[RMDB]
RNA sequence: GGGAACGACUCGAGUAGAGUCGAAAAUUUUUAGUUUUGAUUCGAUCACAAUUGAAACGAAACAUUAGAAUCAAAUCAAUUCCAACUGGAAGAAAAAAUGGUGAAUAUUCAUUGAUCAAAUCAGUCAGCUUUUACUGGAGUUCGCUCCAGUAAAAGCAAAAGAAACAACAACAACAAC
Reactivity to 2A3 in 0.01 (KOAc 150mM, MgCl2 10mM, bicine 150mM(pH8.5), 24C), signal-to-noise 2, nucleotides 027 to 126: u080u080u000u000u080a070g000u000u000u000u000g040a030u000u050c000g050a080u080c080a030c200a300a210u120u170g080a280a090a040c080g040a050a100a000c040a020u010u020a010g030a000a000u000c000a000a070a040u000c000a010a140u010u070c000c010a100a120c010u070g080g000a020a070g040a030a170a020a000a000a000u090g060g000u200g150a150a020u060a000u180u040c010a010u020u020g000a000u060c000a000a000a150u070c000a000g060u000c000a000

Chemical mapping of a 177-nucleotide RNA with 2A3. The 2A3 profile rests on 666 reads. 2A3 adducts were read by reverse transcription with SuperScript II with manganese.